[RMDB]
Chemical mapping of a 177-nucleotide RNA with 2A3 and DMS. Values cover nucleotides 27 to 126. Conditions: 150 mM KOAc, 10 mM MgCl2 and 150 mM bicine (pH 8.5), 24 C. Source: RMDB libraries RFM100 and RFMREP, as collected in RNAgym.
RNA sequence: GGGAACGACUCGAGUAGAGUCGAAAAAACUCUGGUGGAGGCUUGUCGCAAUGCUGACGUGCAAAUCGCUUGUCUAACUUGAGUAUAGGGGCGAAAGACUAAUCGAACAACCUAGUAGCUGGUUCCUUUUCCUGCAAUAGUUCGCUAUUGCAGGAAAAAAAGAAACAACAACAACAAC
Reactivity to 2A3 in 0.01 (KOAc 150mM, MgCl2 10mM, bicine 150mM(pH8.5), 24C), signal-to-noise 2, nucleotides 027 to 126: a000a000c060u050c040u060g010g020u070g060g030a060g010g030c000u010u030g040u090c070g000c030a040a080u030g060c080u170g030a060c100g070u100g030c020a000a000a050u060c030g000c000u000u140g000u040c010u000a080a080c020u040u110g010a030g040u030a030u100a100g070g000g000g000c000g000a060a020a020g030a030c060u080a060a100u090c030g000a110a030c020a030a040c010c030u040a040g000u000a000g090c020u010g000g060u020u020c000c000u010
Reactivity to DMS in 0.01 (KOAc 150mM, MgCl2 10mM, bicine 150mM(pH8.5), 24C), signal-to-noise 2, nucleotides 027 to 126: a060a020c030u000c010u010g000g020u000g000g050a010g010g000c030u000u010g000u020c000g000c120a100a080u020g000c010u000g000a100c130g000u020g000c090a030a080a180u060c080g000c020u000u000g000u010c080u000a020a020c030u020u010g000a020g030u000a060u030a060g000g030g000g030c010g000a040a090a120g020a090c090u000a130a090u020c060g030a130a060c120a090a170c090c010u000a080g000u000a070g030c090u000g020g000u000u000c020c010u000